[RMDB]
RNA sequence: GGGAACGACUCGAGUAGAGUCGAAAAGAUAUGGAGCGUGGAGACGCACAGAACUUCGGAAACGAAUCCCUGUGAACUACGUCCAAUCACGCUCCUAAGUCAAAACCAUACUGUUCGCAGUAUGGAAGAUAGUUUAGAGCUUCGGCUCUAAACUAUCAAAAGAAACAACAACAACAAC
Reactivity to 2A3 in 0.01 (KOAc 150mM, MgCl2 10mM, bicine 150mM(pH8.5), 24C), signal-to-noise 3, nucleotides 027 to 126: g030a000u010a040u150g000g000a010g020c030g000u030g000g070a170g030a030c000g050c050a000c010a000g070a110a050c070u040u030c030g010g070a070a080a080c010g020a030a030u140c110c060c040u000g020u000g000a100a100c140u240a020c300g020u000c020c000a020a100u140c010a000c000g030c010u020c000c000u000a050a020g000u010c060a000a020a100a110c010c000a000u000a010c010u010g080u060u080c300g010c160a010g000u010a010u000g000g050a010a030
Reactivity to DMS in 0.01 (KOAc 150mM, MgCl2 10mM, bicine 150mM(pH8.5), 24C), signal-to-noise 2, nucleotides 027 to 126: g000a030u000a300u000g000g010a000g030c010g060u000g010g000a170g000a000c020g000c040a010c000a010g000a100a150c300u000u000c010g020g000a090a110a170c010g020a020a010u000c160c150c010u000g000u000g000a090a050c130u020a250c000g000u000c000c090a100a080u000c010a010c030g000c000u000c000c000u000a010a030g010u000c040a070a010a070a120c000c000a030u020a000c000u000g010u000u000c160g030c000a010g020u000a010u000g010g010a030a050